[RMDB]
RNA sequence: GGGAACGACUCGAGUAGAGUCGAAAACGUAAGACGGGGAAUAACGAGAGAUCAAACCCAAACGCGCUAGCCCGGAUUCUCCCGCCUGAGAGAUGAACGGCGAAUUAUAAUUCAGGAUAGUCAUUCAUUAGCGUGUCGGUUCGCAGGUGGAUGGUGAGAUUGCAUAGAACUUCGGUUCUAUGCAAUCAAAAGAAACAACAACAACAAC
Reactivity to 2A3 in 0.01 (KOAc 150mM, MgCl2 10mM, bicine 150mM(pH8.5), 24C), signal-to-noise 4, nucleotides 027 to 156: c040g030u060a030a030g060a030c030g000g010g010g030a020a090u100a170a020c060g020a030g010a010g010a120u090c110a060a060a170c000c010c010a060a070a000c050g000c000g000c040u030a020g000c010c000c000g000g010a010u030u000c000u000c010c020c010g060c020c050u100g020a080g000a000g000a060u010g010a020a000c000g000g000c000g010a010a000u100u060a120u060a160a080u060u050c020a010g070g010a050u080a040g060u020c010a030u070u010c010a030u030u100a030g010c010g010u030g060u060c050g040g050u080u080c030g000c040a030g050g010u020g010g020a050u030g000g000u010g010a050
Reactivity to DMS in 0.01 (KOAc 150mM, MgCl2 10mM, bicine 150mM(pH8.5), 24C), signal-to-noise 2, nucleotides 027 to 156: c040g050u000a040a040g000a110c020g040g000g020g020a110a080u020a100a130c020g000a170g000a190g000a130u000c070a050a100a150c020c000c030a100a110a080c020g000c040g000c020u000a160g040c020c000c050g000g010a210u000u000c040u000c020c040c030g060c140c170u000g000a090g030a090g010a050u000g040a300a190c210g000g000c030g000a050a050u000u000a110u000a100a110u000u000c050a120g020g010a090u000a140g000u000c040a070u000u000c040a110u000u010a040g010c090g040u030g000u010c050g000g000u000u000c040g030c070a060g000g020u000g010g000a100u000g000g000u010g010a080